This 177-nucleotide RNA was probed chemically with DMS and 2A3. The reactions ran in a buffer of 150 mM KOAc, 10 mM MgCl2 and 150 mM bicine (pH 8.5), at 24 C. DMS adducts were read by reverse transcription with MarathonRT. 2A3 adducts were read by reverse transcription with SuperScript II with manganese. It was measured as part of the RMDB libraries RFM100 and RFMREP. For DMS, 960 sequencing reads were counted.
RNA sequence: GGGAACGACUCGAGUAGAGUCGAAAACGGUGCUUGCAUCACCUGACACCGGAUGACCGGAUUAAUCGGAUUAGCUCGCUCACUUGUGGACGAGCCCGCAUCUUCCGGGUCCCGUCCCUCCGUCACGAGCAUUCUGCCGUUUCGACGGCAGAAUGCUAAAAGAAACAACAACAACAAC
Reactivity to DMS in 0.01 (KOAc 150mM, MgCl2 10mM, bicine 150mM(pH8.5), 24C), signal-to-noise 1, nucleotides 027 to 126: c060g030g000u000g070c030u000u000g010c100a140u000c080a030c100c090u010g090a210c030a070c000c040g000g000a130u010g000a070c050c090g000g000a080u060u000a030a070u070c040g030g000a130u000u060a160g000c000u010c000g000c010u010c010a080c000u050u060g030u070g060g020a030c020g000a080g000c030c000c000g020c120a100u050c150u000u010c130c010g000g010g000u030c050c000c010g000u000c010c000c060u000c090c080g090u000c200a190c080g010
Reactivity to 2A3 in 0.01 (KOAc 150mM, MgCl2 10mM, bicine 150mM(pH8.5), 24C), signal-to-noise 3, nucleotides 027 to 126: c030g020g030u070g030c040u070u060g030c080a140u040c020a060c020c050u000g020a010c020a010c050c020g000g000a060u070g050a040c010c010g010g010a020u070u090a040a060u100c010g000g020a000u100u150a030g000c010u010c010g000c000u010c030a040c040u090u170g080u230g140g020a030c030g000a000g010c000c000c000g030c010a070u000c060u050u000c010c010g000g020g000u050c020c040c000g040u080c040c000c010u010c020c010g100u100c060a020c150g050